[RMDB]
RNA sequence: GGGAACGACUCGAGUAGAGUCGAAAAGCCAGCUUUUGAAAGCAAGACAUUGCAUGCUACUAUAUUUCUUAGCCCAGAGGCCAGAACCUUCAUUAUAUAAGUGCAAUUGAGGAGUAUGUUCCAGCCAACAUGUAGUUCGUUUCGACGAACUACAUGUAAAAGAAACAACAACAACAAC
Reactivity to 2A3 in 0.01 (KOAc 150mM, MgCl2 10mM, bicine 150mM(pH8.5), 24C), signal-to-noise 2, nucleotides 027 to 126: g050c010c010a000g000c030u070u100u080u170g250a230a100a000g000c020a110a030g030a030c000a100u030u220g000c010a010u130g020c000u020a060c030u080a050u050a150u300u110u010c030u040u140a060g000c000c010c000a050g070a060g010g000c030c000a000g000a020a050c010c000u040u120c050a070u000u230a070u040a030u010a210a050g080u080g070c020a100a140u090u120g060a080g080g000a000g060u140a070u300g000u020u030c000c000a010g040c030c000a080
Reactivity to DMS in 0.01 (KOAc 150mM, MgCl2 10mM, bicine 150mM(pH8.5), 24C), signal-to-noise 3, nucleotides 027 to 126: g010c020c050a090g030c040u000u000u000u000g010a100a090a070g000c050a110a100g020a100c130a070u000u000g020c060a070u010g020c060u010a100c100u000a080u000a070u000u000u000c030u000u000a120g020c030c030c040a140g010a090g000g010c030c050a110g010a070a100c060c040u000u010c080a060u000u010a060u020a080u010a070a080g010u000g030c060a030a090u010u010g010a090g010g010a090g000u000a060u020g000u000u000c020c030a120g000c080c090a100